[RMDB]
RNA sequence: GGGAACGACUCGAGUAGAGUCGAAAACCUCGCAUCGCAAGUUCGUGCUUGCGACUUACAUGUAGGGCGAGGGGUGGGCGAAAGUUGCCAUGAGACCGUAACUUUCGUAGUCAUUGAUAAAGGGGCACAUGCCCUGACUAGUUCGCUAGUCAGGGAACCUAAUGUUCGGCUUCGGCCGAACAUUAGGAAAAGAAACAACAACAACAAC
Reactivity to 2A3 in 0.01 (KOAc 150mM, MgCl2 10mM, bicine 150mM(pH8.5), 24C), signal-to-noise 2, nucleotides 027 to 156: c000c000u010c000g040c020a140u000c000g020c000a020a020g020u190u250c190g150u300g110c000u000u030g010c000g000a010c010u010u130a030c030a090u100g060u130a080g010g040g040c010g000a020g010g000g000g000u060g020g050g000c000g000a000a000a020g010u020u000g000c000c020a070u140g100a090g020a210c000c010g000u010a000a000c000u010u000u000c020g010u000a050g030u010c080a110u020u070g030a040u120a110a070a060g000g010g000g000c060a050c030a100u120g040c000c000c000u000g000a000c000u000a010g000u040u050c160g000c100u000a000g000u020c000a000g000g000g000a000a000
The record gives the reactivity of an RNA of 207 nucleotides to 2A3. Source: RMDB library M2RFPK, as collected in RNAgym. For 2A3, 910 sequencing reads were counted.